[RMDB]
RNA sequence: GGGAACGACUCGAGUAGAGUCGAAAAGCAUGAGAUUCGUCUCAUGCAAAAAAGAUAUGGAUCGACCCAGGCUUCCCAGGUCGUUGAAAUCGGAAACGAUGGAGACCUGAACAGCCUGCGAUCCUAAGUCAAAAAACAAUAGGUUCGCCUAUUGUAAUACGUAGAUUCCUUUCGAGGAAUCUACGUAAAAAGAAACAACAACAACAAC
Reactivity to DMS in 0.01 (KOAc 150mM, MgCl2 10mM, bicine 150mM(pH8.5), 24C), signal-to-noise 1, nucleotides 027 to 156: g050c000a030u020g020a030g000a000u010u000c300g020u000c000u000c000a010u030g000c030a010a000a090a080a080a060g030a100u000a220u000g000g040a080u030c030g030a150c070c200c140a030g050g000c000u000u000c050c050c010a050g020g040u000c000g010u000u150g000a110a200a030u000c020g020g000a200a130a240c020g080a050u010g000g130a300g000a050c020c000u000g020a050a060c040a020g030c000c000u000g020c010g020a040u000c000c010u000a020a070g040u020c040a000a050a060a080a110a020c000a030a010u000a000g000g010u010u000c300g000c040c000u000a000u000u010g030u000a050a120
Reactivity to 2A3 in 0.01 (KOAc 150mM, MgCl2 10mM, bicine 150mM(pH8.5), 24C), signal-to-noise 2, nucleotides 027 to 156: g020c000a020u020g020a000g000a030u070u160c240g100u000c040u000c000a000u000g000c010a040a000a000a000a000a120g040a020u070a030u050g000g000a000u000c010g030a110c090c070c040a000g000g000c010u100u050c100c090c000a000g000g000u000c000g030u060u060g020a080a060a000u000c000g020g040a080a060a060c010g000a010u020g000g000a050g000a020c000c000u010g010a100a030c010a020g000c000c000u000g000c000g000a000u010c000c000u010a120a000g060u050c050a000a000a000a120a000a120c010a000a000u040a010g030g050u060u070c280g090c050c000u000a000u010u030g000u040a030a090